[RMDB]
RNA sequence: GGGAACGACUCGAGUAGAGUCGAAAAAUGUCCUUUUUCCACUUGUUUGCAGAGCACUGACAAUUGGAGUUAUACACUUCACCUAGGAGACUGAAGGACUCUUUUCUAAGAAAUCGAAUGGCUUCAGGAAAGAGAUCAACAGAGCCCGAUAUUUAAAGUCACGAAAAUGAUUCGUCAUUUUCGUGACAAAAGAAACAACAACAACAAC
Reactivity to 2A3 in 0.01 (KOAc 150mM, MgCl2 10mM, bicine 150mM(pH8.5), 24C), signal-to-noise 2, nucleotides 027 to 156: a000u090g040u010c000c000u000u000u020u100u050c000c000a020c020u050u040g050u070u060u060g040c120a040g080a080g060c090a090c050u070g030a070c020a040a140u020u000g020g080a050g030u090u120a160u030a130c060a030c030u000u050c020a090c070c020u010a040g020g000a110g030a020c030u020g080a080a030g040g020a010c010u000c010u000u000u010u050c020u010a060a090g020a070a070a190u200c110g040a230a110u160g160g000c010u040u010c130a000g030g000a000a000a000g030a000g010a060u040c020a000a120c000a020g060a040g030c030c010c000g030a020u100a230u270u160u190a150a120a010